[RMDB]
RNA sequence: GGGAACGACUCGAGUAGAGUCGAAAAGGCUAUGCGGCAUCUGUCAUUGGCUGGACUCUUAUCCGAUCAUAAGUCGAACGUGGAAGGUAUCAACUUUAUUAUCAAGUCAUCUUAUGUUUUUAAGAGAUAUCUAGCUAUAUACGGAUUUGGUGUAACGACAGUACGCAACUUUCGAGUUGCGUACUGUAAAAGAAACAACAACAACAAC
Reactivity to DMS in 0.01 (KOAc 150mM, MgCl2 10mM, bicine 150mM(pH8.5), 24C), signal-to-noise 1, nucleotides 027 to 156: g000g020c040u010a090u000g000c060g030g040c060a040u010c010u010g020u010c100a130u000u000g030g020c010u000g030g010a080c000u020c040u000u000a070u000c140c090g050a150u000c020a040u000a030a040g000u010c020g000a100a070c060g010u000g010g020a080a150g000g010u000a100u010c130a090a130c050u000u000u000a050u010u010a150u000c080a020a080g030u000c030a140u000c040u010u000a040u000g030u000u010u000u010u040a040a110g030a050g000a130u010a100u000c000u000a070g000c030u000a070u010a180u000a070c010g010g000a130u000u000u000g000g000u000g030u010a040a110c080g010
Reactivity to 2A3 in 0.01 (KOAc 150mM, MgCl2 10mM, bicine 150mM(pH8.5), 24C), signal-to-noise 3, nucleotides 027 to 156: g060g000c050u060a030u190g060c050g000g040c020a050u020c030u030g040u030c020a050u040u030g000g000c000u000g000g000a000c000u000c010u060u050a020u050c040c120g120a080u070c030a020u020a040a000g070u050c140g160a070a040c060g080u050g040g060a040a000g070g030u160a090u220c020a020a100c020u020u070u060a090u120u110a070u200c030a080a020g040u010c000a080u020c060u050u030a010u020g040u050u130u010u050u040a000a000g020a000g010a010u070a060u220c000u010a000g000c020u020a040u000a000u020a230c020g010g010a010u060u020u090g050g000u040g010u040a060a020c050g010
Structure probing data (DMS and 2A3) for a 207-nucleotide construct. Reactivities are given for positions 27 through 156. The reactions ran in a buffer of 150 mM KOAc, 10 mM MgCl2 and 150 mM bicine (pH 8.5), at 24 C. 2A3 adducts were read by reverse transcription with SuperScript II with manganese.